[RMDB]
An RNA of 177 nucleotides, treated with DMS and 2A3 and read out base by base. For DMS the reverse transcriptase was MarathonRT. The DMS profile rests on 1,571 reads. The 2A3 profile rests on 3,175 reads. 2A3 adducts were read by reverse transcription with SuperScript II with manganese.
RNA sequence: GGGAACGACUCGAGUAGAGUCGAAAAUCAGGAACCUUCGGGUUCCUGAAAAGAACGCUGCAUCGCAAAGCGAGCGCGCGAGACCGCGCGUACGCGAAGAAAAAAGAAUUGGGUUCGCCCAAUUCAACCGAUAUUAGAUCUUCGGAUCUAAUAUCGGAAAAGAAACAACAACAACAAC
Reactivity to DMS in 0.01 (KOAc 150mM, MgCl2 10mM, bicine 150mM(pH8.5), 24C), signal-to-noise 2, nucleotides 027 to 126: u000c000a010g000g020a040a010c000c000u000u000c220g040g010g000u000u000c000c000u020g010a010a000a100a150g030a120a100c060g000c020u000g000c040a030u000c020g020c090a090a100a150g000c000g030a300g020c010g020c010g010c010g000a160g010a210c140c010g000c000g020c020g000u010a050c110g030c020g010a030a140g000a010a100a030a060a080a130g000a040a000u000u000g020g000g020u000u000c230g000c020c000c000a010a000u000u000c000a060a140
Reactivity to 2A3 in 0.01 (KOAc 150mM, MgCl2 10mM, bicine 150mM(pH8.5), 24C), signal-to-noise 3, nucleotides 027 to 126: u030c000a000g000g010a010a000c010c010u080u170c260g110g000g000u010u010c000c000u000g000a000a000a000a000g030a080a020c050g000c070u070g020c040a100u090c060g020c100a130a060a070g000c010g040a030g030c010g010c000g000c010g020a090g220a240c160c050g000c000g000c000g010u020a030c010g000c040g030a090a070g090a040a100a000a000a000a010g010a010a000u000u010g030g000g010u040u050c210g050c020c010c020a010a010u000u000c000a010a010

It was measured as part of the RMDB library M2PK50.